[RMDB]
RNA sequence: GGGAACGACUCGAGUAGAGUCGAAAAGCAGUGUGACUUUGGGCGAGAGAUAUGCUUCCUGGGAUCCACUUUCUAUCUCAGUCCAGGGGCCUGAUGCCCUGAUGGGGCCGGCAUGGGGCCAGUUAUCCAGCAGGGGAGAGGCCAGGAGAUUCUGGGCAUUACGUAUCCAAUUCGUUGGAUACGUAAUAAAAGAAACAACAACAACAAC
Reactivity to 2A3 in 0.01 (KOAc 150mM, MgCl2 10mM, bicine 150mM(pH8.5), 24C), signal-to-noise 3, nucleotides 027 to 156: g030c030a030g020u040g020u040g130a000c000u000u010u010g000g000g000c020g020a010g010a020g010a080u050a050u300g080c010u010u020c010c020u000g050g010g000a030u090c080c000a110c130u170u240u050c070u150a040u010c010u010c020a000g030u000c020c020a040g130g060g000g030c020c000u080g030a160u160g060c000c000c000u000g010a020u010g010g020g010g000c000c020g030g000c060a190u300g080g000g200g020c020c000a020g000u040u040a070u170c000c000a010g000c010a010g000g000g000g010a040g000a010g010g000c010c000a000g000g020a020g010a010u020u000c000u010g000g010g000c030
Reactivity to DMS in 0.01 (KOAc 150mM, MgCl2 10mM, bicine 150mM(pH8.5), 24C), signal-to-noise 2, nucleotides 027 to 156: g010c020a090g040u010g030u000g000a070c020u000u000u000g020g020g010c020g010a100g010a150g000a130u000a070u000g010c010u000u000c020c000u000g000g000g020a040u000c050c030a100c130u000u010u000c050u000a140u010c030u020c030a070g000u010c030c020a110g030g000g020g010c020c010u000g000a130u000g020c010c000c010u000g000a040u010g030g020g040g070c020c010g050g010c030a300u000g030g030g000g030c010c020a030g010u000u000a090u000c000c000a070g030c010a070g010g050g000g010a110g000a070g020g010c010c010a050g020g000a070g000a070u000u010c020u000g000g000g030c210
This 207-nucleotide RNA was probed chemically with 2A3 and DMS.